[RMDB]
RNA sequence: GGGAACGACUCGAGUAGAGUCGAAAAGAUCGGGCACCAUGAGUUCUUGUGGUUCAGUGUGUUACGGUUUAGAUUUGGGCACUACUUAUUCGACCAUCGGAUGUCUCGUGGAUAGAAACUCGGUGGCGGGUUAUAUCAGUUUCGACUGAUAUAACCCAAAAGAAACAACAACAACAAC
Reactivity to DMS in 0.01 (KOAc 150mM, MgCl2 10mM, bicine 150mM(pH8.5), 24C), signal-to-noise 3, nucleotides 027 to 126: g000a050u010c010g000g020g010c070a170c010c040a040u010g020a050g000u010u000c030u000u010g030u010g010g010u010u000c160a090g000u010g010u000g000u000u010a080c060g000g010u010u000u010a100g020a140u000u000u010g000g010g000c020a030c020u020a050c050u010u010a150u000u010c120g000a070c000c010a010u010c110g010g000a040u010g010u010c010u010c020g020u000g010g000a180u000a070g010a070a080a120c020u000c010g020g010u010g000g020c150
Reactivity to 2A3 in 0.01 (KOAc 150mM, MgCl2 10mM, bicine 150mM(pH8.5), 24C), signal-to-noise 4, nucleotides 027 to 126: g050a020u040c010g000g000g020c010a000c010c000a030u020g020a010g040u090u030c040u090u140g030u050g030g000u020u050c040a030g010u000g000u000g030u060u050a250c060g010g090u030u070u200a130g010a170u090u080u240g020g030g020c020a000c050u100a010c000u230u200a100u200u190c110g030a030c030c020a020u030c010g000g040a040u070g080u070c000u010c000g040u030g000g000a010u050a170g090a050a130a020c000u000c010g000g030u030g070g030c090